[RMDB]
RNA sequence: GGGAACGACUCGAGUAGAGUCGAAAAGAUAUGGACUCCCCACCGUAUGAACUACAGAGAAAGUAUCGGAAACGAUACUAAUCUGCAUACGAGGUCCUAAGUCAAAACUGAUGGUUCGCCAUCAGAAGUCUACAAGAUUCUUCGGAAUCUUGUAGACAAAAGAAACAACAACAACAAC
Reactivity to DMS in 0.01 (KOAc 150mM, MgCl2 10mM, bicine 150mM(pH8.5), 24C), signal-to-noise 2, nucleotides 027 to 126: g000a100u010a180u000g010g010a060c000u000c160c010c000c000a300c100c000g000u000a000u010g000a060a060c110u010a300c030a010g020a000g000a100a090a040g000u010a000u000c000g000g020a100a100a180c000g000a010u000a000c000u000a020a250u000c000u000g010c000a010u000a010c000g000a180g020g000u000c000c000u010a080a100g020u000c050a100a060a070a150c010u000g000a000u000g000g000u000u010c300g030c020c000a000u000c000a000g010a020a030
Reactivity to 2A3 in 0.01 (KOAc 150mM, MgCl2 10mM, bicine 150mM(pH8.5), 24C), signal-to-noise 3, nucleotides 027 to 126: g010a010u140a080u200g000g040a010c000u160c030c010c000c000a020c000c020g000u000a010u010g020a090a060c100u210a060c300a010g020a010g030a110a300a020g000u000a000u000c000g010g030a080a020a020c020g000a000u000a000c000u000a000a020u000c000u000g000c000a010u000a000c000g020a030g040g000u000c020c000u040a180a070g090u070c060a010a030a120a130c010u000g010a010u030g000g080u050u120c300g030c080c010a000u000c000a010g000a010a010